[RMDB]
This 177-nucleotide RNA was probed chemically with DMS. Values are in units of 0.01, from 0 to 300, in steps of 10. The reactions ran in a buffer of 150 mM KOAc, 10 mM MgCl2 and 150 mM bicine (pH 8.5), at 24 C. The data come from the RNA Mapping Database (RMDB), library OK2TRN.

RNA sequence: GGGAACGACUCGAGUAGAGUCGAAAACUGGCUAAUUUGUGUAUUUUUAGUAGAGAUGGGGUUUCACCAUGUUGAGCAGGAUGGUUUUCUGUCUCUUGACCUCAGGGGAUCUGCUCGCCUCGGCCUCUGUAAAAGAACUCUUCGGAGUUCUUUUACAAAAAGAAACAACAACAACAAC
Reactivity to DMS in 0.01 (KOAc 150mM, MgCl2 10mM, bicine 150mM(pH8.5), 24C), signal-to-noise 2, nucleotides 027 to 126: c030u000g010g020c030u010a060a050u010u000u010g030u010g010u000a010u010u000u000u000u010a060g010u000a040g000a040g010a030u000g010g010g000g000u010u000u010c110a120c040c050a030u010g020u010u000g000a050g020c020a020g000g000a060u000g010g000u000u000u010u000c040u000g010u000c010u000c020u000u010g000a070c070c060u000c050a080g000g010g010g010a090u000c020u000g010c020u010c030g000c050c020u000c050g010g000c040c020u010c090